Chemical mapping of a 177-nucleotide RNA with 2A3 and DMS. For DMS the reverse transcriptase was MarathonRT. 2A3 adducts were read by reverse transcription with SuperScript II with manganese. It was measured as part of the RMDB libraries RFM100 and RFMREP.

[RMDB]
RNA sequence: GGGAACGACUCGAGUAGAGUCGAAAAUUCAUGAAGUGGAGAGAAAUGAUAAAUGCUUUCAUUUGAGUCAGAGUCGUACACAUCACAGGCAGCUGCUGUGAGCGCUGUUAUUACAGUUUUGACCUGAGACAUUAUUUGGUUUCGACCAAAUAAUGUCAAAAGAAACAACAACAACAAC
Reactivity to 2A3 in 0.01 (KOAc 150mM, MgCl2 10mM, bicine 150mM(pH8.5), 24C), signal-to-noise 8, nucleotides 027 to 126: u050u020c010a010u050g080a080a030g050u040g080g040a050g010a000g010a050a060a070u090g050a050u080a140a130a050u150g050c040u050u070u070c030a070u050u030u150g050a030g030u040c040a020g010a000g040u030c020g010u050a030c030a010c010a070u060c010a010c010a010g140g000c030a040g040c050u170g000c000u050g060u050g110a050g020c040g000c020u030g040u080u040a080u080u100a040c030a020g020u020u030u070u110g050a050c010c000u030g020a030
Reactivity to DMS in 0.01 (KOAc 150mM, MgCl2 10mM, bicine 150mM(pH8.5), 24C), signal-to-noise 7, nucleotides 027 to 126: u010u020c060a070u010g010a080a080g030u000g010g000a100g000a090g010a070a070a060u010g000a070u010a070a080a080u020g010c130u010u010u010c050a050u000u010u000g000a090g010u000c040a110g000a050g010u000c020g020u000a060c110a060c070a080u000c060a040c070a030g000g010c050a080g020c100u010g020c030u010g010u010g000a060g030c130g000c050u000g000u000u010a060u020u010a060c090a050g010u000u010u010u000g000a100c050c020u000g010a270
The RNA was probed in 150 mM KOAc, 10 mM MgCl2 and 150 mM bicine (pH 8.5) at 24 C.